[RMDB]
RNA sequence: GGGAACGACUCGAGUAGAGUCGAAAAGAUAUGGAGGUCGCUUAGGGAGUGGAUGGUUCGGAAACGAACCAAUCACGAAGAACUAAGCGAGCCUCCUAAGUCAAAGGGCUCUUGUUCGCAAGAGCCCGUCAGUUCAACACUUCGGUGUUGAACUGACAAAAGAAACAACAACAACAAC
Reactivity to DMS in 0.01 (KOAc 150mM, MgCl2 10mM, bicine 150mM(pH8.5), 24C), signal-to-noise 2, nucleotides 027 to 126: g000a040u000a300u010g000g000a020g020g020u000c000g010c010u000u000a020g000g000g030a120g020u000g010g000a050u000g000g000u000u000c000g000g000a120a110a250c010g030a010a010c010c000a010a010u000c000a010c010g000a110a190g010a140a190c000u010a010a000g000c000g010a060g000c010c000u000c000c010u000a010a020g000u010c020a110a130a150g000g010g000c000u000c000u010u000g000u010u000c200g020c010a000a000g000a020g020c020c000c000
Reactivity to 2A3 in 0.01 (KOAc 150mM, MgCl2 10mM, bicine 150mM(pH8.5), 24C), signal-to-noise 2, nucleotides 027 to 126: g020a020u070a030u180g010g000a000g030g020u040c010g000c000u000u000a020g000g090g070a270g050u030g000g030a040u010g000g020u000u000c020g010g030a010a030a050c000g020a000a010c020c030a000a050u020c000a000c030g140a240a060g000a050a060c000u010a000a000g000c000g010a010g020c000c010u000c000c000u000a000a010g010u030c040a150a100a140g000g000g000c000u000c000u030u040g020u090u120c260g050c210a030a000g010a000g020c000c000c000

Conditions: 150 mM KOAc, 10 mM MgCl2 and 150 mM bicine (pH 8.5), 24 C. This 177-nucleotide RNA was probed chemically with DMS and 2A3. 2A3 adducts were read by reverse transcription with SuperScript II with manganese.